[RMDB]
RNA sequence: GGGAACGACUCGAGUAGAGUCGAAAAGCAGUUUCACUCACUGUAGACUCUGAGCGCAGAGUGUCAGUCGUGCUACCACAUGCACGUGAUCAGAGUAUGUGUGAACUCUGACUGACGAGACAAUCGCUUGUCUCCUAUAUAAUGAAACUGGUGAGUCUCACCUAGUACCCUUCGGGGUACUAGGUGAAAAAGAAACAACAACAACAAC
Reactivity to DMS in 0.01 (KOAc 150mM, MgCl2 10mM, bicine 150mM(pH8.5), 24C), signal-to-noise 1, nucleotides 027 to 156: g030c020a040g000u000u000u000c010a070c010u020c040a050c150u020g040u000a020g000a010c000u000c000u010g000a300g020c190g030c030a050g000a050g030u000g020u000c010a010g020u000c030g000u010g000c010u000a260c090c010a030c120a010u000g000c020a100c070g000u000g040a100u010c060a090g000a140g000u000a020u000g040u000g000u010g040a080a070c000u000c030u030g010a030c020u000g000a020c000g000a030g010a030c000a000a100u000c210g020c130u010u000g000u000c000u000c010c000u000a000u000a000u000a020a020u000g000a010a000a020c000u000g040g020u000g000a100g000u000c090
Reactivity to 2A3 in 0.01 (KOAc 150mM, MgCl2 10mM, bicine 150mM(pH8.5), 24C), signal-to-noise 3, nucleotides 027 to 156: g100c010a000g000u010u000u010c010a010c040u020c000a020c030u010g000u010a000g000a010c010u010c000u000g050a040g240c040g000c060a000g000a000g010u010g010u000c000a000g020u020c010g010u010g000c000u070a120c030c040a030c010a110u050g000c010a010c070g070u120g070a130u200c040a030g000a010g030u000a060u080g120u030g060u040g100a060a020c010u020c050u070g010a040c000u000g000a000c010g000a000g000a000c020a020a100u230c090g020c180u020u020g000u000c000u010c010c000u000a020u010a020u010a020a030u040g010a000a010a000c000u000g030g110u080g040a090g050u020c010